[RMDB]
Conditions: 150 mM KOAc, 10 mM MgCl2 and 150 mM bicine (pH 8.5), 24 C. Structure probing data (2A3 and DMS) for a 177-nucleotide construct. In probing experiments dimethyl sulfate is read out at A N1 and C N3, which are open when not base-paired. Reactivities are given for positions 27 through 126.

RNA sequence: GGGAACGACUCGAGUAGAGUCGAAAACCCCUUGGGAACUCAUACCUUGGGGGAGGACAACCCGGGGAACUGAAACAUCUAAGUACCCGGAGGAGAAGAAAUCAACUGCGAGAUUCCCCGAGUAGCGUGUUCAAUUGAGAUUCGUCUCAAUUGAACAAAAAGAAACAACAACAACAAC
Reactivity to 2A3 in 0.01 (KOAc 150mM, MgCl2 10mM, bicine 150mM(pH8.5), 24C), signal-to-noise 7, nucleotides 027 to 126: c000c000c000c000u020u030g000g010g030a060a040c030u040c170a070u120a180c010c000u000u010g000g000g010g000g010a060g060g010a040c030a060a040c040c000c000g000g000g000g010a050a010c020u020g020a100a160a070c050a130u070c030u050a050a010g000u010a010c000c000c000g000g010a020g010g030a100g010a110a030g040a050a150a040u070c040a040a070c030u100g040c090g020a040g040a120u020u030c010c000c010c000g030a020g040u090a020g050c080g060
Reactivity to DMS in 0.01 (KOAc 150mM, MgCl2 10mM, bicine 150mM(pH8.5), 24C), signal-to-noise 5, nucleotides 027 to 126: c020c000c010c030u010u000g000g020g000a080a140c270u050c160a100u010a150c040c010u010u020g000g000g010g030g010a070g000g000a160c110a090a140c060c010c000g020g000g000g000a130a060c140u000g000a110a130a140c200a090u020c030u020a070a040g000u000a190c010c010c000g000g000a060g000g000a120g000a100a100g000a050a130a100u010c050a080a100c040u010g010c020g020a080g000a270u000u000c000c000c000c070g010a080g000u020a070g000c120g000